The record gives the reactivity of an RNA of 207 nucleotides to 2A3. 2A3 adducts were read by reverse transcription with SuperScript II with manganese. Reactivities are rounded to 0.1 and cut off at 0 and 3. For 2A3, 899 sequencing reads were counted. The reactions ran in a buffer of 150 mM KOAc, 10 mM MgCl2 and 150 mM bicine (pH 8.5), at 24 C. Values cover nucleotides 27 to 156.
RNA sequence: GGGAACGACUCGAGUAGAGUCGAAAAGAAACGCGGGCCUGUCUCCUAAGAUGCCUCCGCUAGUCGAGCGGACUUGGCCUCUUCCGCCCUAGGACCUUUUCUUUCUGAUCUUGCUUGUUCCAACGAGCCCCGCGAGUGGAAUCCCCGGAACCCCUGCCGUUGAUAUUCAGUUCGCUGAAUAUCAACGAAAAGAAACAACAACAACAAC
Reactivity to 2A3 in 0.01 (KOAc 150mM, MgCl2 10mM, bicine 150mM(pH8.5), 24C), signal-to-noise 1, nucleotides 027 to 156: g020a030a120a030c050g000c060g010g060g010c040c050u080g100u100c050u050c090c030u050a090a000g010a050u030g000c010c000u010c000c010g010c000u010a050g180u170c090g100a020g020c000g020g020a020c040u080u100g020g000c000c000u020c010u060u010c010c040g010c000c000c030u030a060g010g050a090c000c000u060u030u070u030c050u040u120u030c040u080g100a140u020c030u090u070g030c000u050u070g050u050u120c040c000a070a050c040g010a020g040c020c000c070c060g040c020g010a020g010u050g070g080a070a060u020c010c000c010c040g030g040a070a050c000c030c000c000u000g020c000